This 177-nucleotide RNA was probed chemically with DMS and 2A3. The RNA was probed in 150 mM KOAc, 10 mM MgCl2 and 150 mM bicine (pH 8.5) at 24 C. Values cover nucleotides 27 to 126. It was measured as part of the RMDB library OK2TRN.
[RMDB]
RNA sequence: GGGAACGACUCGAGUAGAGUCGAAAAUGAUAGCUCCUGCAGUGCGCCGUUGAUUGCCGCUGAGCUCGGGAUUGAGCGAGUUUGCGCAGGUGCCAGUCCCGAGAAAAAAUCACAGUAUAUCCAGACCUCAAGAACCUAAGUUCGCUUAGGUUCUUGAAAAAGAAACAACAACAACAAC
Reactivity to DMS in 0.01 (KOAc 150mM, MgCl2 10mM, bicine 150mM(pH8.5), 24C), signal-to-noise 4, nucleotides 027 to 126: u010g010a120u000a090g000c050u000c020c030u010g020c050a080g030u000g010c110g010c030c060g020u010u000g020a110u000u010g010c030c030g010c070u000g010a100g010c020u000c000g000g000g000a040u000u000g000a150g020c000g000a110g010u010u000u010g010c120g020c050a070g010g020u000g000c030c020a030g010u000c010c000c010g010a040g010a000a010a050a070a080a040u000c040a060c070a070g000u000a060u000a070u000c040c080a130g010a140c150c060
Reactivity to 2A3 in 0.01 (KOAc 150mM, MgCl2 10mM, bicine 150mM(pH8.5), 24C), signal-to-noise 2, nucleotides 027 to 126: u110g020a020u070a090g020c020u010c050c020u030g050c030a020g030u020g020c080g020c040c070g060u070u080g090a200u140u110g000c020c000g000c040u030g040a020g030c010u010c000g000g000g000a010u020u070g010a060g010c010g000a090g130u080u150u140g090c080g010c030a060g030g110u110g040c000c000a010g010u000c000c020c000g000a020g000a010a080a010a000a000a000u130c080a020c010a030g090u100a040u020a040u210c040c030a020g080a090c000c050